[RMDB]
RNA sequence: GGGAACGACUCGAGUAGAGUCGAAAAUUCAGCCAAUGGCAUUUUACAUACCUUCAACUAAGGGUCCUAAGUCCAUAAAGGCUCUAAAGUAAUUAGAAGAUUCCAUCAUAGCAGGUUUAAAAUGUCCAUUCGGGAAAGUAUUCGUACUUUCCCGAAUAAAAGAAACAACAACAACAAC
Reactivity to DMS in 0.01 (KOAc 150mM, MgCl2 10mM, bicine 150mM(pH8.5), 24C), signal-to-noise 3, nucleotides 027 to 126: u010u000c070a070g010c080c070a120a080u010g010g010c020a000u000u000u000u000a010c300a110u000a110c030c020u000u000c050a120a060c060u000a120a060g000g000g000u000c020c010u000a090a120g000u000c100c060a040u010a110a140a200g000g010c000u000c030u000a050a060a100g010u010a050a110u010u000a060g010a070a130g010a080u020u010c070c060a050u000c080a120u000a070g010c070a010g000g010u000u010u000a010a000a020a010u000g000u000c030c150
Reactivity to 2A3 in 0.01 (KOAc 150mM, MgCl2 10mM, bicine 150mM(pH8.5), 24C), signal-to-noise 2, nucleotides 027 to 126: u050u010c020a030g090c010c010a050a070u040g000g000c010a010u020u010u040u020a060c030a050u210a040c000c000u040u080c040a040a020c030u060a030a030g010g000g030u020c020c000u050a080a040g060u000c030c010a040u100a090a100a000g020g000c000u000c000u020a040a080a010g050u050a080a240u110u130a040g040a180a000g000a010u210u060c050c010a040u080c020a010u070a050g050c050a010g000g000u000u040u050a040a050a030a030u030g050u010c010c000
Source: RMDB library OK2TRN, as collected in RNAgym. This 177-nucleotide RNA was probed chemically with DMS and 2A3. For 2A3, 2,080 sequencing reads were counted. The reactions ran in a buffer of 150 mM KOAc, 10 mM MgCl2 and 150 mM bicine (pH 8.5), at 24 C. For DMS, 1,994 sequencing reads were counted.